[RMDB]
Overview
Chemical mapping of a 177-nucleotide RNA with DMS. The RNA was probed in 150 mM KOAc, 10 mM MgCl2 and 150 mM bicine (pH 8.5) at 24 C. The DMS profile rests on 1,398 reads. For DMS the reverse transcriptase was MarathonRT.

RNA sequence: GGGAACGACUCGAGUAGAGUCGAAAAGUUUGGGAAAGCAUCCACUUUGAGAAUUUACCAUAGAUAGCUGGCGUUAAGUUGUAAUGUAGUAUAAAUCAUACAAUUCUUGUAGUACAUCAUAUAUAGCCUAAUCGCUAUGGUUCGCCAUAGCGAUUAGAAAAGAAACAACAACAACAAC
Reactivity to DMS in 0.01 (KOAc 150mM, MgCl2 10mM, bicine 150mM(pH8.5), 24C), signal-to-noise 2, nucleotides 027 to 126: g020u000u010u000g020g010g000a040a070a090g000c090a110u000c010c040a050c090u010u010u000g010a140g010a070a110u000u020u000a140c010c030a060u020a050g000a120u000a080g020c050u000g000g010c090g010u000u020a050a120g000u000u010g010u000a060a060u000g020u000a100g000u010a060u000a040a060a140u000c080a140u010a080c060a040a100u000u000c090u000u000g010u010a030g020u000a030c070a030u000c090a020u000a100u000a070u000a130g020c150